Conditions: 150 mM KOAc, 10 mM MgCl2 and 150 mM bicine (pH 8.5), 24 C.
This 207-nucleotide RNA was probed chemically with 2A3 and DMS.
RNA sequence: GGGAACGACUCGAGUAGAGUCGAAAACGUCGGGAUCGCCGCCACUGUCGGCCUCGUCAACGCCGGGUUCCGGGGAACCGUCCGGCACAUCAGCACGAUCGCCACCGCCACCAUGUGGGCGUCGAGGAUCAUGCGCGGGUUCGCCGUGCAGGUGAUGGGUCAAGUUAAGAUUCGUCUUAACUUGACCAAAAGAAACAACAACAACAAC
Reactivity to 2A3 in 0.01 (KOAc 150mM, MgCl2 10mM, bicine 150mM(pH8.5), 24C), signal-to-noise 3, nucleotides 027 to 156: c070g020u030c010g010g030g040a140u080c070g020c050c010g030c050c040a120c110u130g040u140c030g010g020c020c000u020c020g020u020c050a100a100c110g000c000c030g000g010g000u250u210c050c010g000g010g010g040a050a080c010c000g040u060c000c000g010g080c010a020c020a060u150c050a010g050c030a010c050g020a020u030c070g100c170c060a030c010c010g020c020c000a150c040c050a150u300g060u300g040g040g000c010g030u040c050g040a070g050g000a020u030c010a030u030g000c000g010c010g040g000g000u210u190c070g030c040c000g020u030g000c010a020g000g060u050g020a030u080g050
Reactivity to DMS in 0.01 (KOAc 150mM, MgCl2 10mM, bicine 150mM(pH8.5), 24C), signal-to-noise 1, nucleotides 027 to 156: c040g000u010c020g020g030g000a050u020c040g040c050c020g040c070c030a060c060u030g010u010c020g000g000c020c000u020c050g030u000c070a060a070c080g040c060c030g000g040g040u000u010c110c050g000g020g000g000a060a110c020c030g040u000c020c030g020g000c030a080c070a090u000c040a110g000c050a130c020g000a000u000c020g020c000c010a090c080c010g030c000c000a050c030c150a160u010g000u060g040g020g000c020g010u000c050g010a130g010g000a040u000c000a070u000g000c040g000c040g000g020g000u010u000c060g000c030c090g020u010g030c010a040g020g030u020g000a110u000g010
For 2A3 the reverse transcriptase was SuperScript II with manganese. The DMS profile rests on 3,561 reads.